Chemical mapping of a 207-nucleotide RNA with DMS and 2A3. For DMS the reverse transcriptase was MarathonRT. The DMS profile rests on 2,282 reads. The RNA was probed in 150 mM KOAc, 10 mM MgCl2 and 150 mM bicine (pH 8.5) at 24 C. The data come from the RNA Mapping Database (RMDB), library RSTRND.
[RMDB]
RNA sequence: GGGAACGACUCGAGUAGAGUCGAAAAGCUCAAAAAAAUAGAUGCAAACAACAUCGUACCUUUCGCUCGUAAAACUGCACCUGUUGCAGCAUAAAACACCUCUAAUUCAGGUUCGAGCGCUUACCGUCUGACACCGUUAAAGAUAGUAAGCACAACCGUUACCAAUCAGGUUCGCCUGAUUGGUAACAAAAGAAACAACAACAACAAC
Reactivity to DMS in 0.01 (KOAc 150mM, MgCl2 10mM, bicine 150mM(pH8.5), 24C), signal-to-noise 1, nucleotides 027 to 156: g010c030u000c000a020a000a020a140a120a140a290u020a010g040a010u000g000c000a080a090a140c030a120a080c030a020u020c000g040u000a190c040c070u010u000u000c020g010c000u000c020g010u000a060a110a050a050c000u000g020c000a030c070c090u010g000u010u020g060c020a030g020c030a130u000a150a120a130a030c060a010c010c030u000c020u010a060a090u010u030c080a020g020g010u000u000c040g050a020g020c020g110c000u030u000a010c000c000g070u030c020u020g000a120c110a170c030c210g000u020u000a130a140a030g000a000u020a000g050u000a020a020g000c010a090c050a030a210c070c060
Reactivity to 2A3 in 0.01 (KOAc 150mM, MgCl2 10mM, bicine 150mM(pH8.5), 24C), signal-to-noise 8, nucleotides 027 to 156: g020c010u000c040a060a080a020a030a010a010a040u230a080g010a010u030g020c080a110a130a080c030a070a040c000a050u040c030g050u090a140c040c030u100u190u180c060g010c010u010c010g030u040a020a030a050a060c010u010g000c010a020c020c130u180g070u210u020g010c000a000g000c020a020u090a040a070a020a010c080a020c020c020u070c040u080a150a160u190u110c060a010g010g000u010u040c020g000a000g000c030g000c010u000u000a000c000c010g010u000c000u020g030a050c030a090c230c070g090u080u110a070a060a010g000a000u010a000g010u000a010a000g020c020a010c010a050a040c050c050